Conditions: 150 mM KOAc, 10 mM MgCl2 and 150 mM bicine (pH 8.5), 24 C. Chemical mapping of a 177-nucleotide RNA with DMS and 2A3. DMS (dimethyl sulfate) methylates the pairing face of unpaired adenines and cytosines. The DMS profile rests on 3,782 reads. It was measured as part of the RMDB library OK2TRN.

RNA sequence: GGGAACGACUCGAGUAGAGUCGAAAAAUACGGUCGGUGAGCUCCACAUGAGGCACCGUGGUGAAGUAGCGCUCCAUCACGUGGGCGAGCAUGUCGCUUAUGCCGCACGCCGUCUGGUACCACGGCACCAUACCCACGUAUUCGUACGUGGGUAUGGAAAAGAAACAACAACAACAAC
Reactivity to DMS in 0.01 (KOAc 150mM, MgCl2 10mM, bicine 150mM(pH8.5), 24C), signal-to-noise 4, nucleotides 027 to 126: a170u020a070c070g000g010u000c090g030g020u000g000a030g000c020u000c140c160a070c080a060u020g010a080g010g020c020a080c030c000g000u010g000g000u000g010a020a030g020u000a150g010c170g010c050u000c030c010a010u000c020a010c030g000u000g010g000g000c010g000a110g010c070a050u000g000u010c150g000c080u010u020a100u010g010c040c010g000c180a100c150g020c000c000g010u000c050u020g010g000u010a140c050c030a050c030g000g000c080a210
Reactivity to 2A3 in 0.01 (KOAc 150mM, MgCl2 10mM, bicine 150mM(pH8.5), 24C), signal-to-noise 3, nucleotides 027 to 126: a010u160a020c040g020g000u050c030g030g040u040g030a030g040c010u030c060c030a090c020a090u090g030a060g090g010c030a030c010c010g000u000g000g010u010g000a040a010g010u040a030g030c060g030c070u010c010c000a030u030c010a010c030g030u220g020g070g010c030g000a060g020c030a040u070g060u100c020g000c050u090u090a070u230g040c000c020g040c030a050c070g020c000c000g010u000c060u100g050g000u030a050c020c020a030c020g030g000c030a030